This 207-nucleotide RNA was probed chemically with 2A3 and DMS. For 2A3 the reverse transcriptase was SuperScript II with manganese. For 2A3, 2,347 sequencing reads were counted.
RNA sequence: GGGAACGACUCGAGUAGAGUCGAAAAAGUCCAUAUGCCCAUCUUUGCUGAGUCGGAUGGAUGUUUAUACCCGCUAUGGAUGCCUAUUACUGAAAUGUAAUAGAUGCCUAAUACUCUCUCUCAGGGAGAGAGUUUAGAUGCCUCCAAAGGCUAUGCUGUGCAUAGCUAGUUUCGACUAGCUAUGCACAAAAGAAACAACAACAACAAC
Reactivity to 2A3 in 0.01 (KOAc 150mM, MgCl2 10mM, bicine 150mM(pH8.5), 24C), signal-to-noise 4, nucleotides 027 to 156: a000g020u000c010c010a020u030a020u130g020c010c000c010a030u020c030u060u110u140g040c070u090g040a040g070u110c010g030g010a010u010g030g020a020u060g070u060u240u010a120u080a090c020c050c040g000c020u020a020u040g020g000a030u030g010c000c000u000a010u000u010a010c010u030g110a100a040a130u160g000u000a010a010u000a010g060a030u090g010c010c000u020a040a030u100a110c000u010c000u000c010u000c010u040c240a160g060g230g010a000g000a000g000a000g000u010u000u000a000g000a000u070g030c010c040u080c030c030a150a090a000g040g000c030u040a060u150g060c030u020
Reactivity to DMS in 0.01 (KOAc 150mM, MgCl2 10mM, bicine 150mM(pH8.5), 24C), signal-to-noise 2, nucleotides 027 to 156: a120g040u000c020c020a030u000a110u010g020c000c010c010a050u010c030u010u010u000g020c090u010g010a110g020u000c060g020g010a120u000g000g020a100u000g010u000u000u010a080u000a140c000c000c020g040c300u010a110u010g010g010a080u020g000c040c000u000a040u000u000a010c000u020g010a150a120a170u010g000u000a010a000u000a030g010a150u000g020c050c000u010a030a060u000a050c000u000c000u000c000u010c020u000c130a300g020g030g010a030g010a040g010a010g000u000u000u000a030g030a150u000g000c040c000u020c040c170a070a100a100g010g000c010u000a140u010g010c100u000